[RMDB]
The data come from the RNA Mapping Database (RMDB), library OK2TST. This 177-nucleotide RNA was probed chemically with DMS and 2A3. The reactions ran in a buffer of 150 mM KOAc, 10 mM MgCl2 and 150 mM bicine (pH 8.5), at 24 C. For DMS the reverse transcriptase was MarathonRT. Reactivities are given for positions 27 through 126. The 2A3 profile rests on 928 reads.
RNA sequence: GGGAACGACUCGAGUAGAGUCGAAAAAGCAAUGCGGAUUCUUCAAUAUGAUGCAGCUUAAGGUGAACUUCAACCACAACAUCUGCACUGAAGUAUGUCAUAAAAGUAUAUCCAGACGUUGCACGCGAUUCCGCCUGUAGUUCGCUACAGGCGGAAUAAAAGAAACAACAACAACAAC
Reactivity to DMS in 0.01 (KOAc 150mM, MgCl2 10mM, bicine 150mM(pH8.5), 24C), signal-to-noise 2, nucleotides 027 to 126: a140g000c000a030a020u000g060c050g000g020a040u000u010c040u000u010c060a090a190u000a010u010g010a080u010g010c070a020g000c200u000u020a190a110g000g000u030g010a100a140c170u000u000c140a080a070c170c070a070c170a070a070c160a000u000c010u040g020c130a070c060u010g000a050a080g010u010a060u000g000u000c030a010u010a040a070a020a080g010u010a040u000a120u000c010c010a130g030a150c020g010u000u000g020c000a160c240g040c200g000
Reactivity to 2A3 in 0.01 (KOAc 150mM, MgCl2 10mM, bicine 150mM(pH8.5), 24C), signal-to-noise 1, nucleotides 027 to 126: a000g000c000a000a000u000g010c000g000g010a010u020u020c010u050u000c010a010a030u100a030u160g070a030u040g020c020a040g000c000u100u040a130a010g100g000u020g070a090a070c020u230u100c080a070a080c010c000a060c030a110a000c020a040u050c020u080g010c030a050c070u040g000a060a000g100u090a050u230g050u040c040a010u020a100a170a000a000g020u020a030u020a030u300c010c010a020g000a060c000g000u010u020g030c040a000c060g090c060g070